[RMDB]
RNA sequence: GGGAACGACUCGAGUAGAGUCGAAAAGGUGUCUAUGACUUUAAGGUCUCAACACAAGAGUUCAGAUUCAUGACUGCUAACAAUCUAACUGCACCUAGAAAUUCUUGGGAGGCUAUGGCUCUGAACUGGACAGCGGUGUUCGCACCGCUGAAAAGAAACAACAACAACAAC
Reactivity to 2A3 in 0.01 (KOAc 150mM, MgCl2 10mM, bicine 150mM(pH8.5), 24C), signal-to-noise 5, nucleotides 027 to 129: g080g000u010g020u010c070u070a130u090g020a030c000u050u140u210a110a020g120g000u020c020u010c040a010a040c020a000c020a010a030g060a000g050u000u000c010a000g010a050u000u010c020a000u090g120a070c030u060g070c000u060a060a070c030a080a060u050c000u110a010a130c050u090g000c060a080c030c000u010a010g030a000a140a030u120u050c040u040u030g010g000g000a010g000g050c030u040a010u090g010g000c000u000c000u000g010a000a000c000u020g020g030a000
Reactivity to DMS in 0.01 (KOAc 150mM, MgCl2 10mM, bicine 150mM(pH8.5), 24C), signal-to-noise 2, nucleotides 027 to 129: g000g020u010g020u000c040u030a060u000g020a040c030u020u030u060a010a110g000g000u000c040u010c300a030a010c040a040c070a100a150g020a060g010u000u000c000a000g010a060u060u010c060a030u010g030a130c010u040g010c030u060a060a090c200a000a000u000c030u020a040a040c020u030g000c050a070c110c060u000a030g020a070a110a000u030u010c180u020u000g030g020g040a070g040g020c080u000a040u000g000g000c070u030c020u000g000a060a020c010u000g060g010a120